[RMDB]
The record gives the reactivity of an RNA of 177 nucleotides to 2A3 and DMS. For 2A3, 3,607 sequencing reads were counted.
RNA sequence: GGGAACGACUCGAGUAGAGUCGAAAAAGUCCUACUACGGUAGGACAAUGGUCCGGAGAUGCGUAAGUAUUUCCGGAGGUGAUUUUAGAUGGUCGGGCCGCCAUCUAGCAGCCGUACGCGGCUGCAACAACGCAGAGGAUUUCGAUCCUCUGCGUUGAAAAGAAACAACAACAACAAC
Reactivity to 2A3 in 0.01 (KOAc 150mM, MgCl2 10mM, bicine 150mM(pH8.5), 24C), signal-to-noise 4, nucleotides 027 to 126: a000g010u010c020c000u000a000c000u010a010c210g190g000u000a000g000g000a000c000a010a040u060g020g010u020c000c000g010g000a000g000a000u010g000c010g070u200a160a150g000u010a090u010u000u010c000c030g000g000a000g010g000u150g110a200u040u140u070u060a010g000a000u000g000g020u030c030g030g000g000c010c010g000c000c000a010u000c000u000a030g000c000a000g000c010c000g020u040a040c250g020c000g150g000c000u010g000c000a000a020
Reactivity to DMS in 0.01 (KOAc 150mM, MgCl2 10mM, bicine 150mM(pH8.5), 24C), signal-to-noise 1, nucleotides 027 to 126: a110g000u000c000c000u000a000c000u000a100c130g030g040u000a000g010g060a010c010a010a030u000g010g000u010c020c000g020g000a040g000a010u000g020c000g030u040a140a040g050u000a030u000u030u000c000c000g010g010a010g000g010u010g000a170u020u020u010u000a010g000a030u010g000g000u000c020g000g000g000c010c060g010c010c000a000u010c000u010a020g020c000a000g010c000c000g050u030a090c180g020c020g020g010c000u010g000c020a020a090